[RMDB]
RNA sequence: GGGAACGACUCGAGUAGAGUCGAAAACACACAAGGUUCGCCUUGUGUGCAAGAAUAGACGAAUACUACCGUAGAAGUAUUCAGGUCACAUAACUACCGAAAUGGCGUUCUGCUUCGGCAGAACGAAAUAGUCUUGACAGUUCGCUGUCAAGACUAUAAAAGAAACAACAACAACAAC
Reactivity to DMS in 0.01 (KOAc 150mM, MgCl2 10mM, bicine 150mM(pH8.5), 24C), signal-to-noise 3, nucleotides 027 to 126: c000a010c000a000c010a010a000g010g020u010u010c280g030c010c000u000u000g000u010g000u000g020c000a070a030g010a170a070u000a040g000a040c010g020a020a020u000a010c000u000a050c150c300g000u000a070g010a100a030g020u000a010u010u000c010a100g000g020u000c010a110c190a060u010a060a090c100u000a160c010c020g000a040a070a050u000g010g020c020g010u000u000c010u000g010c010u000u010c230g020g010c000a010g000a000a000c010g000a000a060
Reactivity to 2A3 in 0.01 (KOAc 150mM, MgCl2 10mM, bicine 150mM(pH8.5), 24C), signal-to-noise 3, nucleotides 027 to 126: c000a000c000a000c000a020a000g010g000u030u050c110g130c040c000u010u010g000u010g000u010g040c000a030a030g110a060a080u140a110g020a010c010g000a010a000u010a010c010u050a090c030c110g120u160a060g070a280a010g020u010a010u000u010c020a030g220g000u000c030a030c010a130u170a090a050c060u060a060c070c070g070a090a030a150u200g140g010c030g020u030u010c010u000g000c000u050u060c090g130g000c000a000g000a000a000c000g000a010a010
The record gives the reactivity of an RNA of 177 nucleotides to DMS and 2A3.
The data come from the RNA Mapping Database (RMDB), library M2PK50.
DMS adducts were read by reverse transcription with MarathonRT.
2A3 adducts were read by reverse transcription with SuperScript II with manganese.
The 2A3 profile rests on 2,446 reads.
Conditions: 150 mM KOAc, 10 mM MgCl2 and 150 mM bicine (pH 8.5), 24 C.